An RNA of 177 nucleotides, treated with 2A3 and read out base by base. The 2A3 profile rests on 666 reads. The RNA was probed in 150 mM KOAc, 10 mM MgCl2 and 150 mM bicine (pH 8.5) at 24 C. Source: RMDB library OK1LIB, as collected in RNAgym.

RNA sequence: GGGAACGACUCGAGUAGAGUCGAAAAAGUAGGAUGAAUUGACCGUCUAGUGUAUCCAGAUUUUCAAUGAUGGUUUAGCUUAAAUCAAUUCAUUGAUUCAACUAUUAAAUUACUAUAAUCUCCACAACCUGGUCACCGUAUUCGUACGGUGACCAGGAAAAGAAACAACAACAACAAC
Reactivity to 2A3 in 0.01 (KOAc 150mM, MgCl2 10mM, bicine 150mM(pH8.5), 24C), signal-to-noise 2, nucleotides 027 to 126: a000g000u010a000g010g010a000u020g000a050a040u030u030g000a020c040c030g160u100c160u120a050g000u110g090u200a080u040c000c040a020g000a060u100u110u090u230c240a160a030u110g110a030u000g030g000u000u110u130a030g030c070u090u140a030a030a030u000c000a000a140u110u010c000a000u020u010g070a000u120u110c070a150a090c050u080a090u090u180a180a020a000u180u200a000c000u000a010u050a160a120u020c050u040c090c070a060c010a060a080